[RMDB]
RNA sequence: GGGAACGACUCGAGUAGAGUCGAAAAACAACAGAUAGCUGGAACCAGCGUAGAAUUCUACGCAUAUCCAUAGCGAAUGGUACCUGUAAAGAAAAUAAGAGUGGAUGUACAAGUACCAACAGCCGUUUAUGCCAUGGUGAUGUCAAUCACAUAUGCAGAUCCCUGCGCGAUUCGUCGCGCAGGGAUCAAAAGAAACAACAACAACAAC
Reactivity to 2A3 in 0.01 (KOAc 150mM, MgCl2 10mM, bicine 150mM(pH8.5), 24C), signal-to-noise 2, nucleotides 027 to 156: a000c000a010a000c030a000g120a100u080a040g030c020u000g040g000a080a130c020c050a090g000c000g000u000a000g020a200a300u220u120c000u030a000c010g000c020a000u040a010u060c040c000a020u140a060g000c000g060a030a030u030g000g000u050a010c000c000u000g010u070a080a060a030g070a090a160a050a020u210a020a000g070a000g160u080g050g060a040u070g040u040a000c000a050a000g000u000a020c000c000a000a080c030a020g000c010c030g030u100u020u060a090u090g070c070c000a020u060g030g000u000g000a020u000g200u180c070a050a030u000c010a000c070a110u100a010u090g030c010a000